[RMDB]
RNA sequence: GGGAACGACUCGAGUAGAGUCGAAAAGGCUACCGAGCUUCUAACUCAGUGAUGUCAAAAGUCUCAGAAAUGCUGGCUUCAGAUUUCCUUAGAGGACUAAAUGAUCAUAAGUCAACAGUACAGAUCCUCACAAUACGGAUUUCGAUCCGUAUUGUGAAAAAGAAACAACAACAACAAC
Reactivity to 2A3 in 0.01 (KOAc 150mM, MgCl2 10mM, bicine 150mM(pH8.5), 24C), signal-to-noise 3, nucleotides 027 to 126: g030g000c020u020a020c020c020g000a030g040c010u110u000c000u070a080a050c000u000c040a020g050u000g130a130u080g060u080c020a030a090a050a090g050u000c010u010c040a040g090a040a120a010u110g050c050u020g060g000c020u090u060c020a030g000a110u040u010u050c000c000u050u120a100g020a050g070g000a010c030u090a020a090a140u140g030a050u040c020a060u020a200a000g030u030c010a010a040c010a050g040u100a030c030a050g100a090u040c030c010
Reactivity to DMS in 0.01 (KOAc 150mM, MgCl2 10mM, bicine 150mM(pH8.5), 24C), signal-to-noise 4, nucleotides 027 to 126: g000g010c020u000a050c050c050g010a060g020c040u010u000c120u010a100a170c050u000c030a070g010u000g010a080u000g020u020c030a020a110a130a080g000u010c010u000c040a110g000a060a070a060u000g020c060u000g010g010c090u000u010c110a110g000a110u000u000u010c000c040u000u000a120g010a120g010g010a040c110u000a040a070a090u000g020a050u000c050a090u000a070a120g000u000c020a040a050c090a080g000u020a060c130a080g000a080u010c030c100